[RMDB]
Overview: Structure probing data (2A3 and DMS) for a 177-nucleotide construct. Conditions: 150 mM KOAc, 10 mM MgCl2 and 150 mM bicine (pH 8.5), 24 C. The DMS profile rests on 1,072 reads. In probing experiments dimethyl sulfate is read out at A N1 and C N3, which are open when not base-paired.
RNA sequence: GGGAACGACUCGAGUAGAGUCGAAAAAAUAGCGGGUCAAGGUACAACGCAGAGAGAUAGGCUCAUCCCAAGUUCUCUUCGGAGUACCAAGACUUCGGUACAGAAGAGAUACCGACUCUUCUUAGAACACAUAUCGGAUGUUCGCAUCCGAUAUGUGAAAAGAAACAACAACAACAAC
Reactivity to 2A3 in 0.01 (KOAc 150mM, MgCl2 10mM, bicine 150mM(pH8.5), 24C), signal-to-noise 1, nucleotides 027 to 126: a000a020u210a070g050c000g000g010g000u020c010a020a040g000g000u010a010c010a010a000c020g010c030a000g000a000g000a010g010a040u070a140g070g000c030u040c090a170u150c050c010c010a030a010g030u030u040c000u000c000u000u010c010g010g010a020g000u000a020c000c000a010a000g010a010c010u070u040c000g000g010u040a050c010a020g040a020a000g000a010g030a010u060a150c020c000g080a070c010u000c000u020u000c020u010u120a050g080a110a020
Reactivity to DMS in 0.01 (KOAc 150mM, MgCl2 10mM, bicine 150mM(pH8.5), 24C), signal-to-noise 2, nucleotides 027 to 126: a040a190u010a020g000c030g000g010g010u000c020a030a300g010g000u010a010c010a020a260c000g030c140a020g010a010g000a040g010a070u000a200g020g000c100u000c300a080u000c220c020c000a120a160g020u010u000c000u000c000u000u000c000g000g010a300g000u000a020c000c000a020a300g000a030c040u000u010c020g000g000u000a090c080a020g000a010a000g020a020g000a060u000a160c060c010g010a180c010u000c000u000u000c020u000u000a150g000a100a140